[RMDB]
RNA sequence: GGGAACGACUCGAGUAGAGUCGAAAAGGAUGUCGUUGAACGCGAACGGCGGGACGCCCAUCUUGCGGGCUGCGUCACGCAGCGAGUACAGCCCCUCCAUGUCGAAGAACUCCUUCGACGCCUCGACGUAGGGCUUGUCCUCCUCGACCUUGGCCUCCGUUUAUCCAACAUUCGUGUUGGAUAAACGAAAAGAAACAACAACAACAAC
Reactivity to 2A3 in 0.01 (KOAc 150mM, MgCl2 10mM, bicine 150mM(pH8.5), 24C), signal-to-noise 3, nucleotides 027 to 156: g040g010a060u060g030u030c020g010u090u080g120a210a030c070g010c060g050a120a060c000g010g000c000g010g030g010a020c020g020c000c020c000a060u050c110u080u190g060c090g030g010g030c050u080g010c050g070u130c040a030c130g020c030a020g000c020g040a000g000u040a020c020a050g000c020c000c000c000u000c040c050a080u130g000u000c010g000a000a020g010a060a060c090u110c030c000u000u000c010g010a010c000g010c020c060u080c060g110a130c050g030u080a050g010g010g030c000u050u120g020u030c010c000u000c010c010u000c010g050a130c010c030u040u060g080g000c010c000u020c040
Reactivity to DMS in 0.01 (KOAc 150mM, MgCl2 10mM, bicine 150mM(pH8.5), 24C), signal-to-noise 2, nucleotides 027 to 156: g000g010a110u010g000u000c020g020u010u000g010a110a110c130g000c020g000a150a040c030g000g010c010g000g000g020a060c060g020c000c020c010a090u000c090u000u000g060c080g030g010g030c040u000g010c000g010u030c020a110c040g020c060a160g010c040g000a150g000u000a090c050a080g050c020c020c020c020u010c040c060a130u000g040u010c010g010a000a040g010a070a250c110u000c140c030u010u000c030g020a070c010g000c060c060u000c050g010a100c010g000u000a040g000g020g020c020u010u000g000u000c020c020u010c020c020u010c020g000a060c050c060u010u010g020g010c080c040u010c060